[RMDB]
RNA sequence: GGGAACGACUCGAGUAGAGUCGAAAAUCAUGGACAGCAAAGGAAAGGCAGCUACAGAGCCUGUGCACCUCAACCUCAGUCUUCAGAUGUUAAACUUUGCUAGUCAGCUGGGGCCCUUUGAAGUUAACGAACUAAACCAGUUCGCUGGUUUAGUUCGAAAAGAAACAACAACAACAAC
Reactivity to DMS in 0.01 (KOAc 150mM, MgCl2 10mM, bicine 150mM(pH8.5), 24C), signal-to-noise 2, nucleotides 027 to 126: u020c090a100u000g000g020a010c010a080g000c050a030a030a060g000g000a050a150a140g010g010c030a020g030c040u000a070c180a090g000a090g000c040c020u000g010u010g010c090a120c020c030u000c110a070a090c040c060u000c120a050g000u010c030u000u010c100a040g010a080u000g010u010u000a050a080a260c050u000u000u000g000c050u000a050g010u000c040a040g030c040u000g020g020g000g000c020c030c030u000u010u020g010a100a100g050u010u010a040a100
Conditions: 150 mM KOAc, 10 mM MgCl2 and 150 mM bicine (pH 8.5), 24 C. Chemical mapping of a 177-nucleotide RNA with DMS. It was measured as part of the RMDB library OK2TRN. In probing experiments dimethyl sulfate is read out at A N1 and C N3, which are open when not base-paired.